An RNA of 207 nucleotides, treated with 2A3 and DMS and read out base by base. It was measured as part of the RMDB library OK3TST. Reactivities are given for positions 27 through 156.
RNA sequence: GGGAACGACUCGAGUAGAGUCGAAAAAGAGGAAGAGAUGCCAUCUUAAUAAUCACAGAAAAAGAGGAAAGCAAUGAAAAACAUUAGGAUCAAGUAGACAGACAUUCGAUCAUGCUUUUCUGCCAGGAGUGAAUUUCCAUGAUCCCACUGAUGACUAGGACUAUUUAGUGUUCGCACUAAAUAGUCCAAAAGAAACAACAACAACAAC
Reactivity to 2A3 in 0.01 (KOAc 150mM, MgCl2 10mM, bicine 150mM(pH8.5), 24C), signal-to-noise 3, nucleotides 027 to 156: a000g050a010g050g020a030a030g020a030g020a060u040g090c010c000a050u010c040u060u070a020a020u120a110a040u140c030a020c020a070g190a090a120a010a030a000g100a010g010g010a030a000a010g000c030a030a170u090g080a090a100a020a050a040c080a090u160u250a090g070g000a020u030c030a040a070g060u060a050g140a080c050a020g080a010c030a070u060u080c120g000a030u020c010a020u060g020c020u060u020u010u020c020u090g100c010c010a020g010g030a030g010u030g020a030a060u020u020u060c020c000a000u050g020a030u020c020c020c070a040c040u070g070a140u050g050a040c080u230a060
Reactivity to DMS in 0.01 (KOAc 150mM, MgCl2 10mM, bicine 150mM(pH8.5), 24C), signal-to-noise 2, nucleotides 027 to 156: a060g000a090g030g000a130a040g020a130g040a080u000g040c040c040a060u000c040u000u010a080a110u000a060a050u010c040a140c050a110g020a090a050a070a100a140g010a060g040g000a090a090a030g010c040a090a140u010g010a040a060a070a020a080c030a130u000u030a040g010g020a080u010c020a050a120g010u000a090g030a090c090a130g010a090c040a120u010u010c040g020a030u000c060a060u000g010c000u000u000u000u010c010u010g000c060c000a040g020g030a090g000u000g010a040a040u000u000u000c040c050a100u000g010a060u010c000c020c010a090c070u000g010a120u020g010a050c040u000a240